RNA sequence: GGGAACGACUCGAGUAGAGUCGAAAAGGGAAACACUGAUGGAGUUUGAAGAACCUCAUGCCACCAAACAAUCUGUUGUGGCUCUAGGGUCGCAGGAAGGUGCGUUGCACCAAGCUCUGGCCGGAGCCCAAAGGUACCCUUUCGAGGGUACCUUUGGAAAAGAAACAACAACAACAAC
Reactivity to DMS in 0.01 (KOAc 150mM, MgCl2 10mM, bicine 150mM(pH8.5), 24C), signal-to-noise 2, nucleotides 027 to 126: g010g000g030a060a090a060c090a050c070u000g010a100u020g020g010a100g010u010u010u010g010a200a100g010a160a120c100c000u010c060a050u000g020c040c030a140c110c030a040a050a010c290a050a070u010c110u000g020u000u000g060u000g010g000c000u030c030u010a090g030g040g020u010c040g070c230a040g030g000a140a240g000g000u000g000c020g000u020u000g010c000a000c000c020a010a090g030c030u000c000u030g000g030c000c000g000g000a030g000c040
Reactivity to 2A3 in 0.01 (KOAc 150mM, MgCl2 10mM, bicine 150mM(pH8.5), 24C), signal-to-noise 3, nucleotides 027 to 126: g020g010g050a030a050a030c030a010c120u100g020a080u110g010g070a060g070u040u070u130g270a230a130g040a110a040c000c010u040c030a040u100g030c020c000a080c030c010a070a050a020c040a070a110u200c100u110g010u050u060g020u040g030g000c000u000c010u060a150g050g000g010u010c030g010c060a000g070g060a100a100g050g000u010g000c150g120u060u280g020c000a010c000c000a020a010g040c010u040c040u080g000g020c000c000g000g000a000g000c000
This 177-nucleotide RNA was probed chemically with DMS and 2A3. The 2A3 profile rests on 1,526 reads. The reactions ran in a buffer of 150 mM KOAc, 10 mM MgCl2 and 150 mM bicine (pH 8.5), at 24 C. Source: RMDB library OK1LIB, as collected in RNAgym. The DMS profile rests on 3,306 reads. For 2A3 the reverse transcriptase was SuperScript II with manganese.